[RMDB]
RNA sequence: GGGAACGACUCGAGUAGAGUCGAAAAACAGACGUUCGCGUCUGUAAAAAUCCUAAGUCAGCAAUGACGGUCCGGGAGCGAAGAACUAUCGGAAACGAUAGGGAGCUCCCAGGACUAAGACAGCUGAUAUGGAAAAAAAGCGUGGUUCGCCACGCAACAUACUGAGAUGUUUCGACAUCUCAGUAUGAAAAGAAACAACAACAACAAC
Reactivity to DMS in 0.01 (KOAc 150mM, MgCl2 10mM, bicine 150mM(pH8.5), 24C), signal-to-noise 1, nucleotides 027 to 156: a000c010a050g000a040c000g010u000u000c300g080c060g040u020c000u000g000u000a000a020a120a140a060u010c000c000u000a100a240g000u000c000a030g030c000a170a090u010g020a110c180g000g000u000c000c000g020g000g010a030g040c000g000a100a120g020a090a180c000u030a000u010c000g000g020a200a120a160c030g000a050u000a010g010g010g020a300g000c020u000c000c000c000a000g010g000a000c000u000a030a130g000a230c070a070g000c010u020g000a020u000a300u030g030g000a000a000a110a130a120a150a220g030c000g010u000g000g030u000u000c080g040c000c000a030c030g040c000a020a070
Reactivity to 2A3 in 0.01 (KOAc 150mM, MgCl2 10mM, bicine 150mM(pH8.5), 24C), signal-to-noise 4, nucleotides 027 to 156: a010c000a000g000a010c000g030u070u080c210g050c010g110u020c000u020g000u000a000a030a010a010a030u010c000c000u030a100a010g020u000c000a000g000c020a070a300u070g030a060c040g000g000u000c000c000g010g010g000a000g000c010g100a280a030g000a050a030c000u000a000u000c010g020g030a110a040a050c010g000a000u000a000g010g000g000a010g010c000u000c020c000c000a020g010g000a000c000u000a050a010g040a050c010a050g210c010u000g000a010u010a030u090g020g030a040a040a030a050a030a090a000g000c000g010u020g000g040u060u120c260g040c100c000a000c000g000c000a000a000

Source: RMDB library RNAMAK, as collected in RNAgym. Structure probing data (DMS and 2A3) for a 207-nucleotide construct. The reactions ran in a buffer of 150 mM KOAc, 10 mM MgCl2 and 150 mM bicine (pH 8.5), at 24 C. Values cover nucleotides 27 to 156. For 2A3 the reverse transcriptase was SuperScript II with manganese.